This 207-nucleotide RNA was probed chemically with DMS and 2A3. For DMS the reverse transcriptase was MarathonRT. 2A3 adducts were read by reverse transcription with SuperScript II with manganese. Source: RMDB library RSTRND, as collected in RNAgym. Reactivities are given for positions 27 through 156. The reactions ran in a buffer of 150 mM KOAc, 10 mM MgCl2 and 150 mM bicine (pH 8.5), at 24 C.
RNA sequence: GGGAACGACUCGAGUAGAGUCGAAAAAGGCUGGUCAAACUCCGCGCCGACCUUCUUGGGCGUGGAUAAGACGAGAUCUUAAAUACGAAGGGAACACUUGUAGGAACGUACAUGGACGUGAUUUUGGACAGGGGUUCGACUCCCCUCACCUCCAGAACCUUACAAGAUCCUUCGGGAUCUUGUAAGGAAAAGAAACAACAACAACAAC
Reactivity to DMS in 0.01 (KOAc 150mM, MgCl2 10mM, bicine 150mM(pH8.5), 24C), signal-to-noise 1, nucleotides 027 to 156: a060g030g010c010u010g060g050u000c030a040a100a120c300u010c020c000g020c040g000c010c000g000a030c040c160u000u010c050u000u000g020g010g030c000g100u020g000g020a030u020a020a280g030a050c020g000a100g000a290u000c040u000u020a000a050a240u000a070c030g030a150a110g020g000g000a090a060c050a060c050u000u010g020u000a060g000g000a110a140c060g000u010a080c030a160u010g020g030a030c030g010u000g000a120u000u000u000u000g020g020a090c130a020g000g030g040g070u000u000c100g000a220c050u020c020c000c020c010u030c000a050c110c020u000c010c000a070g000a090a110
Reactivity to 2A3 in 0.01 (KOAc 150mM, MgCl2 10mM, bicine 150mM(pH8.5), 24C), signal-to-noise 3, nucleotides 027 to 156: a000g120g000c030u100g000g000u020c010a010a020a150c040u000c000c000g030c000g020c010c000g050a090c010c050u110u080c060u300u300g030g000g000c000g010u030g000g000a010u020a040a010g030a010c080g010a010g010a030u000c030u120u240a030a050a020u080a040c020g030a030a050g020g000g050a070a020c040a030c080u060u050g030u080a020g010g080a080a010c040g010u070a020c030a120u020g000g030a010c000g020u040g060a070u040u070u140u170g060g010a010c010a050g000g000g000g000u010u040c010g010a010c040u060c000c010c000c010u010c010a020c000c000u000c000c010a030g030a060a070